[RMDB]
RNA sequence: GGGAACGACUCGAGUAGAGUCGAAAAUGAAGUCGGUGAUCAUGCGGAGAGCCAUUGCUGCUUAUACUAUAUACGGUACCCUGGUCCUUAAGCCAGUUCAGCACGCGACCAAUUUUUUUCCUGCGUGAAAUGUAAAGAUGGUGAAUCGCUUGUGGCCAUUGAAUUAUCAUUUCGAUGAUAAUUCAAUAAAAGAAACAACAACAACAAC
Reactivity to 2A3 in 0.01 (KOAc 150mM, MgCl2 10mM, bicine 150mM(pH8.5), 24C), signal-to-noise 6, nucleotides 027 to 156: u120g030a060a030g070u070c040g010g010u030g030a090u060c020a030u060g020c020g020g020a050g020a010g060c020c010a030u030u090g020c030u020g010c010u090u080a060u020a130c110u040a040u060a060u030a250c070g030g010u070a060c030c010c000u020g010g030u130c060c050u110u090a050a010g010c020c010a020g000u070u070c020a030g070c010a020c030g050c010g030a050c020c000a030a060u060u030u010u010u020u110u080c020c020u060g010c010g010u040g030a110a080a040u110g020u080a050a090a030g050a020u030g010g030u030g030a060a070u040c030g000c020u030u050g030u030g030g020c010c010
Reactivity to DMS in 0.01 (KOAc 150mM, MgCl2 10mM, bicine 150mM(pH8.5), 24C), signal-to-noise 5, nucleotides 027 to 156: u000g000a090a090g010u000c050g010g000u000g020a110u000c040a090u010g030c040g020g000a130g000a190g030c040c050a140u000u000g020c020u000g010c020u010u000a140u000a090c070u010a130u010a240u010a080c080g010g030u000a060c060c060c030u000g010g020u000c040c070u000u000a070a200g000c030c010a080g030u000u000c050a100g000c030a030c040g000c010g000a070c040c020a020a000u000u000u000u020u000u000u000c000c020u010g020c030g050u000g000a050a050a060u000g030u000a070a060a110g010a090u010g040g020u000g010a110a110u000c050g000c050u000u000g020u000g020g010c020c050
Notes:
An RNA of 207 nucleotides, treated with 2A3 and DMS and read out base by base. 2A3 adducts were read by reverse transcription with SuperScript II with manganese. The 2A3 profile rests on 5,913 reads. DMS adducts were read by reverse transcription with MarathonRT. Values cover nucleotides 27 to 156. Conditions: 150 mM KOAc, 10 mM MgCl2 and 150 mM bicine (pH 8.5), 24 C.